[RMDB]
RNA sequence: GGGAACGACUCGAGUAGAGUCGAAAACAGCAAAGUUACCGCUAUGGCGGAUGGCAGAAAGAAGAAAGCCCCGAAGGUCAAUUUUCAUUAACCAACGAGGCUGUCUCCAUACUGAACAUAUGCAGAUUCGUGCCUAUUAUUUCGAUAAUAGGCACGAAAAAGAAACAACAACAACAAC
Reactivity to 2A3 in 0.01 (KOAc 150mM, MgCl2 10mM, bicine 150mM(pH8.5), 24C), signal-to-noise 3, nucleotides 027 to 126: c020a000g110c080a120a130a020g020u090u110a070c020c050g000c020u010a020u060g040g000c000g010g000a040u010g020g000c060a040g100a100a110a010g120a080a010g020a110a210a000g000c000c000c000c000g000a030a000g000g000u020c030a050a060u050u180u140u170c090a090u060u130a020a000c000c000a020a040c000g000a000g010g020c010u020g060u000c010u000c010c000a030u100a290c010u010g020a120a010c010a000u030a020u210g000c000a020g040a150u040
Reactivity to DMS in 0.01 (KOAc 150mM, MgCl2 10mM, bicine 150mM(pH8.5), 24C), signal-to-noise 1, nucleotides 027 to 126: c010a240g050c090a130a200a020g030u000u000a120c020c030g040c060u000a000u010g030g000c000g000g000a050u000g000g000c170a040g010a090a140a150g000a110a110g000a190a110a000g010c000c000c000c010g000a030a300g030g020u000c010a000a030u000u060u040u040c300a010u000u000a060a020c000c020a000a300c020g000a050g000g010c000u000g000u000c000u000c000c120a050u020a180c000u000g000a060a040c090a020u020a000u020g000c000a060g000a200u000
Notes
This 177-nucleotide RNA was probed chemically with 2A3 and DMS. The reactions ran in a buffer of 150 mM KOAc, 10 mM MgCl2 and 150 mM bicine (pH 8.5), at 24 C. Values cover nucleotides 27 to 126. For DMS the reverse transcriptase was MarathonRT. Source: RMDB library RFM100, as collected in RNAgym.